[RMDB]
RNA sequence: GGGAACGACUCGAGUAGAGUCGAAAAUAUUUCACCUGGUCUCCCACCCCAGGGGGCAGAUGACUUCACUCAGUCAACAUGUAACAACCUGGUCUUUGGUGCCCAUGUGACCUGGCAGCACUGUCCCCCGGUCGAUGACGUUCGCGUCAUCGACCGGAAAAGAAACAACAACAACAAC
Reactivity to 2A3 in 0.01 (KOAc 150mM, MgCl2 10mM, bicine 150mM(pH8.5), 24C), signal-to-noise 2, nucleotides 027 to 126: u160a050u020u140u110c100a030c010c000u060g050g040u000c040u020c070c000c000a100c000c000c010c000a070g000g000g000g010g000c020a080g050a260u000g120a160c050u050u020c100a110c070u030c000a000g010u000c010a070a060c020a080u000g160u240a120a040c040a000a020c000c000u120g030g000u050c130u150u110u110g060g030u090g020c000c000c000a040u060g050u040g010a110c010c020u000g020g050c040a010g030c020a070c000u010g030u000c000c020c010
Chemical mapping of a 177-nucleotide RNA with 2A3.
The reactions ran in a buffer of 150 mM KOAc, 10 mM MgCl2 and 150 mM bicine (pH 8.5), at 24 C.
For 2A3, 531 sequencing reads were counted.